[RMDB]
RNA sequence: GGGAACGACUCGAGUAGAGUCGAAAAACCGCCGCGCAGUAGGCGGCGCAGGUCGGUCUCCUCGGUGGAGAACAGACAGCUGCGGAUCUGGCCAUCGGCGGUCAGCCGGGUGCGGUCGCACGUCGAAAGAUAACAGGGGGUUCGCCCCCUGUUAUCUAAAAGAAACAACAACAACAAC
Reactivity to DMS in 0.01 (KOAc 150mM, MgCl2 10mM, bicine 150mM(pH8.5), 24C), signal-to-noise 1, nucleotides 027 to 126: a070c020c000g030c010c000g000c100g010c060a120g020u010a150g010g040c070g020g000c020g000c030a050g000g030u000c020g010g000u000c010u000c000c000u010c260g000g010u020g030g000a010g010a060a040c030a100g000a020c020a170g000c050u000g000c000g010g000a100u000c070u000g010g000c030c030a090u020c000g010g010c030g010g010u000c100a050g000c050c020g000g010g010u000g010c070g000g030u000c050g000c130a030c090g010u000c020g030a090a110